RNA sequence: GGGAACGACUCGAGUAGAGUCGAAAACGCAGGUUUCGUACCUUCUCAAAGGUUAGCUGCGCAAUGGGGAGUGGCAGGACCUUACAGAAGUAAUGUCAGUGAUUGCACACCAUUGUACAAGUCAAUGAGCCGUAGAGUAUUUCGAUACUCUACGGCUAAAAGAAACAACAACAACAAC
Reactivity to 2A3 in 0.01 (KOAc 150mM, MgCl2 10mM, bicine 150mM(pH8.5), 24C), signal-to-noise 1, nucleotides 027 to 126: c030g010c020a040g010g110u050u130u180c060g030u070a050c000c000u110u010c100u030c100a130a080a000g040g010u070u020a040g070c010u030g000c000g000c000a000a030u030g010g000g000g040a300g050u130g130g080c000a010g010g060a010c010c000u000u000a000c010a030g180a260a000g160u220a110a120u000g030u050c020a000g030u000g090a070u010u130g000c010a000c000a010c020c010a000u020u000g000u030a070c020a150a000g070u050c050a040a070u050g030
Reactivity to DMS in 0.01 (KOAc 150mM, MgCl2 10mM, bicine 150mM(pH8.5), 24C), signal-to-noise 3, nucleotides 027 to 126: c130g040c110a080g020g010u000u010u010c100g030u000a030c020c000u000u000c140u000c110a090a060a030g000g010u000u000a120g030c010u000g010c050g010c020a030a020u000g000g000g030g010a150g070u000g000g010c020a050g000g010a090c100c030u000u000a040c020a100g010a130a150g000u000a030a010u000g000u010c020a140g030u010g010a160u010u000g020c010a070c000a080c020c000a030u010u020g000u000a060c090a070a080g000u000c120a030a050u000g010
The record gives the reactivity of an RNA of 177 nucleotides to 2A3 and DMS.
It was measured as part of the RMDB library OK2TRN.
For DMS, 2,298 sequencing reads were counted.
The RNA was probed in 150 mM KOAc, 10 mM MgCl2 and 150 mM bicine (pH 8.5) at 24 C.